An RNA of 177 nucleotides, treated with 2A3 and DMS and read out base by base. 2A3 is a SHAPE reagent: it acylates the 2'-hydroxyl of flexible nucleotides of all four kinds. DMS (dimethyl sulfate) methylates the pairing face of unpaired adenines and cytosines. The reactions ran in a buffer of 150 mM KOAc, 10 mM MgCl2 and 150 mM bicine (pH 8.5), at 24 C.

[RMDB]
RNA sequence: GGGAACGACUCGAGUAGAGUCGAAAAACUACAAGUUUAUCGAGUGAAAUAAACGAAAUAAGUAAAGAAGUUCCUCGAUGGGAAUACCAAUUGAUCGACGACAUCGAGGUAGGGCUGAAUCCUGCCAAGCGUCUAUGCUAUUCGUAGCAUAGACGCUAAAAGAAACAACAACAACAAC
Reactivity to 2A3 in 0.01 (KOAc 150mM, MgCl2 10mM, bicine 150mM(pH8.5), 24C), signal-to-noise 3, nucleotides 027 to 126: a000c040u100a020c030a080a070g030u000u040u000a100u050c160g110a160g000u250g100a100a090a090u100a000a150a000c040g010a020a240a140u210a150a000g120u070a140a100a030g080a110a010g160u140u000c050c000u000c000g000a010u030g000g040g000a020a050u160a220c040c110a020a120u020u160g020a020u070c030g160a030c000g000a000c010a010u120c110g040a000g030g000u030a010g000g000g070c060u000g140a120a090u100c000c030u030g000c010c000a020
Reactivity to DMS in 0.01 (KOAc 150mM, MgCl2 10mM, bicine 150mM(pH8.5), 24C), signal-to-noise 2, nucleotides 027 to 126: a090c060u000a080c100a060a140g030u020u000u000a020u000c020g000a140g000u030g000a210a170a010u000a000a070a030c060g000a130a070a070u010a000a130g050u000a020a080a140g050a030a100g000u030u000c010c000u000c000g000a080u000g080g040g000a070a060u030a180c110c150a100a110u010u020g000a020u020c030g000a090c050g000a210c080a030u000c000g000a040g000g000u110a010g010g000g080c020u000g000a300a040u030c050c000u000g000c020c170a100